[RMDB]
Background:
An RNA of 177 nucleotides, treated with DMS and read out base by base. The DMS profile rests on 1,109 reads. Values cover nucleotides 27 to 126. DMS adducts were read by reverse transcription with MarathonRT.
RNA sequence: GGGAACGACUCGAGUAGAGUCGAAAAGAUAUGGACCGAGGAGGGAGCUCGUGUCGGAAACGACGAGCGAAGAACUCCCGGUCCUAAGUCAAAGGACCACCUUUCUGUUCGCAGAAAGGUGGUCCAACUGUCUACCUAGGUUCGCCUAGGUAGACAGAAAAGAAACAACAACAACAAC
Reactivity to DMS in 0.01 (KOAc 150mM, MgCl2 10mM, bicine 150mM(pH8.5), 24C), signal-to-noise 1, nucleotides 027 to 126: g000a030u010a300u000g000g000a020c000c000g000a190g020g000a030g000g000g010a140g020c000u000c000g010u010g000u010c010g030g010a110a060a300c030g040a000c000g000a010g020c010g000a070a170g000a070a270c020u000c000c000c010g030g000u000c000c000u000a000a080g010u010c030a080a100a100g000g000a000c000c010a010c000c000u000u010u000c000u000g040u020u000c230g050c000a010g000a000a010a000g010g030u010g000g010u000c000c000a000a040